[RMDB]
RNA sequence: GGGAACGACUCGAGUAGAGUCGAAAAAGCCGGUCUACGGACCGGCAAAACGUUCAUCUCGUUUUACGGGCCGCAUUAAGAUUGAAGCCAAGGAACGGGGUCUUCAGACUACGACUACGGUCGUAGAUUACGCCUCCGAGUUUCGACUCGGAGGCAACAGUGUUUACUUGUUCGCAAGUAAACACUGAAAAGAAACAACAACAACAAC
Reactivity to 2A3 in 0.01 (KOAc 150mM, MgCl2 10mM, bicine 150mM(pH8.5), 24C), signal-to-noise 2, nucleotides 027 to 156: a000g020c000c020g030g010u000c020u030a070c250g100g010a000c000c000g050g030c000a000a000a000a000c060g010u060u040c110a090u020c000u020c010g000u010u000u020u170a050c020g000g010g010c000c020g000c060a080u210u080a170a000g090a200u050u070g080a060a000g020c020c010a010a080g050g000a000a040c010g000g030g000g000u000c040u150u150c000a050g020a130c000u000a000c000g010a000c000u030a010c220g100g000u000c000g000u010a000g000a000u030u060a000c030g000c000c000u000c000c000g000a020g000u080u080u080c150g150a020c000u000c000g000g000a000g000g000c000a000a010
Reactivity to DMS in 0.01 (KOAc 150mM, MgCl2 10mM, bicine 150mM(pH8.5), 24C), signal-to-noise 1, nucleotides 027 to 156: a180g000c010c010g090g030u000c020u010a050c260g080g020a000c000c010g000g060c040a000a010a010a030c050g010u000u000c100a150u000c060u020c000g050u000u000u020u000a160c100g000g010g010c000c020g000c020a070u000u000a200a100g000a260u000u000g050a130a040g010c000c020a070a100g000g020a020a110c080g030g000g050g050u000c020u010u000c070a160g020a220c000u010a020c000g020a000c000u020a080c240g070g000u000c000g030u000a000g010a150u000u000a070c100g000c010c020u000c000c020g000a040g020u000u010u000c260g030a060c020u000c000g020g030a010g020g000c000a000a000